[RMDB]
RNA sequence: GGGAACGACUCGAGUAGAGUCGAAAAAGCAGGAGGUGGAUGCGAACGGCAAUCCGGUGACGGAUCCGGCGACUGGUAACGGCAAGGCUCCGGAGAAGCAGGAUGACCAGUGCUCGGGCCAUGAGACCUUAUAGGCUCUAUUCGUAGAGCCUAUAAGAAAAGAAACAACAACAACAAC
Reactivity to DMS in 0.01 (KOAc 150mM, MgCl2 10mM, bicine 150mM(pH8.5), 24C), signal-to-noise 8, nucleotides 027 to 126: a090g020c060a050g000g010a090g010g020u000g010g010a080u000g010c060g000a090a080c080g000g000c110a100a080u000c020c020g010g000u010g010a160c040g010g000a080u000c020c010g000g000c060g000a070c050u000g010g010u010a070a110c100g010g000c070a090a090g010g000c040u000c030c030g010g010a080g010a090a090g010c040a070g000g000a080u000g000a090c050c020a060g010u000g010c040u010c060g010g000g000c030c030a060u000g000a100g000a100c160
Reactivity to 2A3 in 0.01 (KOAc 150mM, MgCl2 10mM, bicine 150mM(pH8.5), 24C), signal-to-noise 4, nucleotides 027 to 126: a000g050c040a030g010g050a040g050g050u070g010g030a030u050g030c030g030a080a030c020g030g000c020a010a040u020c020c020g020g010u080g040a050c020g030g020a030u080c010c010g010g010c020g050a040c030u040g030g020u060a120a030c030g020g000c030a020a080g040g000c020u020c050c020g040g030a080g030a040a010g040c030a020g000g060a050u060g060a060c010c020a030g030u020g030c030u020c030g030g010g040c000c010a040u080g050a020g020a050c010